[RMDB]
RNA sequence: GGGAACGACUCGAGUAGAGUCGAAAAGAUAUGGACGAUCCGUAGACGCCAGGUUUCUUCGGAAACGAGAAACCUGGAACUACGUCGAGGGAUCGUCCUAAGUCAGCCCUCUACUUCGGUAGAGGAACGCACUCUAUCUGUUCGCAGAUAGAGUGCGAAAAGAAACAACAACAACAAC
Reactivity to DMS in 0.01 (KOAc 150mM, MgCl2 10mM, bicine 150mM(pH8.5), 24C), signal-to-noise 1, nucleotides 027 to 126: g020a010u000a300u000g040g000a000c010g000a010u000c000c000g000u020a300g000a020c000g060c000c000a010g070g000u000u000u000c010u000u000c000g000g000a090a040a250c030g010a000g000a000a000a000c000c000u000g000g000a010a000c030u010a300c030g010u000c050g010a200g000g010g000a000u010c010g030u000c000c010u000a000a050g020u040c000a180g000c100c040c000u000c000u000a030c000u000u010c180g050g010u000a000g000a000g000g040a070a090
The record gives the reactivity of an RNA of 177 nucleotides to DMS. The reactions ran in a buffer of 150 mM KOAc, 10 mM MgCl2 and 150 mM bicine (pH 8.5), at 24 C. The DMS profile rests on 792 reads. Source: RMDB library TTRDEL, as collected in RNAgym.